[RMDB]
RNA sequence: GGGAACGACUCGAGUAGAGUCGAAAAGUGAUGAAACCAAACCUUGAGUUCACUUUUGAAGUUUAUUCAUUAUUGUGUGUACAUAGCUAAGGUGGUGGUUUUUUUCAGAAGUGAAGACUUGACAGGCUAAUCCCUACCUAUUCGUAGGUAGGGAUUAAAAAGAAACAACAACAACAAC
Reactivity to 2A3 in 0.01 (KOAc 150mM, MgCl2 10mM, bicine 150mM(pH8.5), 24C), signal-to-noise 2, nucleotides 027 to 126: g050u040g020a060u040g020a020a000a030c010c000a030a000a030c010c020u040u030g100a010g040u070u060c000a010c000u080u020u000u000g010a020a000g010u150u290u300a130u090u050c030a030u040u160a090u150u170g000u000g030u020g010u080a050c030a070u130a080g030c030u050a010a050g050g020u050g070g170u100g020g000u070u030u000u000u000u000u010c040a080g020a100a020g030u060g090a080a020g020a060c020u090u050g050a020c080a020g220g010c030
Reactivity to DMS in 0.01 (KOAc 150mM, MgCl2 10mM, bicine 150mM(pH8.5), 24C), signal-to-noise 6, nucleotides 027 to 126: g020u000g010a060u000g010a040a040a050c010c000a130a190a060c010c010u010u000g020a090g020u000u010c020a010c010u000u000u010u000g010a020a040g010u010u010u010a050u010u000c010a020u000u000a050u010u010g020u000g020u010g010u010a070c130a140u010a100g010c060u010a030a030g010g020u000g010g020u000g000g010u000u000u000u000u010u010u000c010a040g010a070a060g000u000g010a080a080g000a070c030u000u000g000a080c150a080g010g010c190

Structure probing data (2A3 and DMS) for a 177-nucleotide construct. Conditions: 150 mM KOAc, 10 mM MgCl2 and 150 mM bicine (pH 8.5), 24 C.